Chemical mapping of a 177-nucleotide RNA with DMS and 2A3. The 2A3 profile rests on 641 reads.

[RMDB]
RNA sequence: GGGAACGACUCGAGUAGAGUCGAAAAGAGACAUCGCGAAUGGAGGGCUGGCGCAGCGAGGUGAGAUUGCGCACCUGGAGGAUCACUUCGCCCGGAGUGUUUUCGCGAUCCGGAAAACGCUGGUUAACACCAUAGCUCCCUUCGGGGAGCUAUGGUGAAAAGAAACAACAACAACAAC
Reactivity to DMS in 0.01 (KOAc 150mM, MgCl2 10mM, bicine 150mM(pH8.5), 24C), signal-to-noise 1, nucleotides 027 to 126: g020a190g070a070c100a070u040c030g000c020g000a040a030u000g010g000a020g050g000g020c060u020g000g000c060g020c080a120g000c030g000a000g000g000u000g000a070g000a150u000u030g000c030g040c240a100c150c010u050g000g000a060g000g030a200u000c070a000c100u000u040c040g000c010c060c000g000g000a000g000u090g000u070u010u030u000c100g020c110g010a120u000c000c080g000g000a170a010a150a150c050g000c000u030g000g000u000u000a100a300
Reactivity to 2A3 in 0.01 (KOAc 150mM, MgCl2 10mM, bicine 150mM(pH8.5), 24C), signal-to-noise 1, nucleotides 027 to 126: g080a010g000a020c020a100u050c030g030c020g030a080a070u280g120g130a120g080g040g000c060u000g050g010c000g010c000a040g020c020g040a000g000g010u010g010a030g020a140u090u110g040c070g000c020a060c000c000u030g060g130a090g000g060a000u060c000a000c000u000u000c010g130c000c040c000g000g000a000g060u190g010u000u070u000u000c040g030c020g000a050u030c020c020g070g000a080a000a000a000c020g000c020u000g000g140u090u000a040a000
Values cover nucleotides 27 to 126. The DMS profile rests on 1,249 reads. The reactions ran in a buffer of 150 mM KOAc, 10 mM MgCl2 and 150 mM bicine (pH 8.5), at 24 C.